The record gives the reactivity of an RNA of 207 nucleotides to 2A3 and DMS.
For 2A3, 7,478 sequencing reads were counted.
Values cover nucleotides 27 to 156.
2A3 adducts were read by reverse transcription with SuperScript II with manganese.
RNA sequence: GGGAACGACUCGAGUAGAGUCGAAAAAUACAUUCCUGUGCCGGCAAUACAGUGUGUAUGGAGGUCUCAAUUGCUCGGAAGUGCCAGCAAACCGGCGUAGAUAUUAGCAGACGUAUGGGCGUAAGACAAAAGAGAAUGAUGUUCGCAUCAUUCUCAAGUAACUAAUAUUGUUCGCAAUAUUAGUUACAAAAGAAACAACAACAACAAC
Reactivity to 2A3 in 0.01 (KOAc 150mM, MgCl2 10mM, bicine 150mM(pH8.5), 24C), signal-to-noise 7, nucleotides 027 to 156: a000u130a020c030a030u040u060c010c010u010g030u050g020c020c040g060g020c050a050a040u090a100c050a070g050u030g010u020g010u140a050u070g050g040a040g010g060u010c010u010c050a070a150u070u070g010c020u030c070g030g030a120a050g070u040g110c020c020a020g020c030a060a030a110c020c020g010g000c010g030u040a020g020a070u070a050u130u130a050g040c050a010g010a070c030g070u070a060u090g030g020g000c010g020u050a040a040g060a060c050a060a090a020a010g000a000g000a000a000u000g000a000u010g030u040u040c190g010c080a000u000c000a000u000u000c000u000c000a000a010
Reactivity to DMS in 0.01 (KOAc 150mM, MgCl2 10mM, bicine 150mM(pH8.5), 24C), signal-to-noise 4, nucleotides 027 to 156: a070u000a040c060a100u000u000c300c010u010g010u000g020c030c010g000g010c040a070a080u000a040c030a060g010u010g020u000g020u000a050u000g010g010a130g030g030u000c010u000c030a070a130u010u000g000c020u000c030g020g000a090a110g000u000g020c020c040a090g010c050a050a110a070c020c010g000g000c020g000u000a060g010a140u000a090u000u010a090g030c020a080g000a060c040g010u000a060u000g010g000g020c030g000u000a050a090g010a120c030a070a070a100a160g000a030g000a030a010u010g000a030u000g000u000u010c300g020c010a020u000c000a020u000u000c000u000c000a010a080